Chemical mapping of a 177-nucleotide RNA with DMS and 2A3. The reactions ran in a buffer of 150 mM KOAc, 10 mM MgCl2 and 150 mM bicine (pH 8.5), at 24 C. DMS (dimethyl sulfate) methylates the pairing face of unpaired adenines and cytosines. Reactivities are given for positions 27 through 126. For DMS the reverse transcriptase was MarathonRT. The data come from the RNA Mapping Database (RMDB), library OK1LIB. The 2A3 profile rests on 5,866 reads.
[RMDB]
RNA sequence: GGGAACGACUCGAGUAGAGUCGAAAACGGCUGCCCAUAGAUCGGAGCCUGGCGACGUAAACCGUCGUGUCAUAUGUAAGCACCAGGUGCCAUCUCCGAGUCGAAUACCGCCGACUUGGGCGUUGCGUCUAGGGUUCCGCUUCGGUGGGACCCUAGAAAAAGAAACAACAACAACAAC
Reactivity to DMS in 0.01 (KOAc 150mM, MgCl2 10mM, bicine 150mM(pH8.5), 24C), signal-to-noise 6, nucleotides 027 to 126: c070g010g010c030u030g010c020c000c010a080u050a040g010a060u000c070g010g000a130g020c070c050u020g000g000c020g000a040c030g020u030a090a120a090c250c010g000u010c050g020u000g000u020c080a100u030a070u050g010u010a110a120g010c090a180c000c020a040g000g010u010g010c030c020a060u010c020u010c060c030g000a020g010u020c010g000a100a110u020a170c070c040g000c050c010g010a060c050u000u000g010g000g000c080g000u010u000g000c070g000
Reactivity to 2A3 in 0.01 (KOAc 150mM, MgCl2 10mM, bicine 150mM(pH8.5), 24C), signal-to-noise 4, nucleotides 027 to 126: c020g050g000c010u060g010c000c010c010a030u120a010g160a070u050c040g000g000a010g020c000c000u000g000g000c000g000a010c000g020u060a030a070a040c070c010g000u010c000g010u030g030u000c010a020u100a030u220g100u100a050a000g030c020a040c010c000a000g000g030u030g020c010c030a060u030c030u020c010c010g000a000g000u010c000g010a040a020u070a120c010c030g030c010c000g020a030c030u020u010g000g000g000c010g170u250u090g010c020g000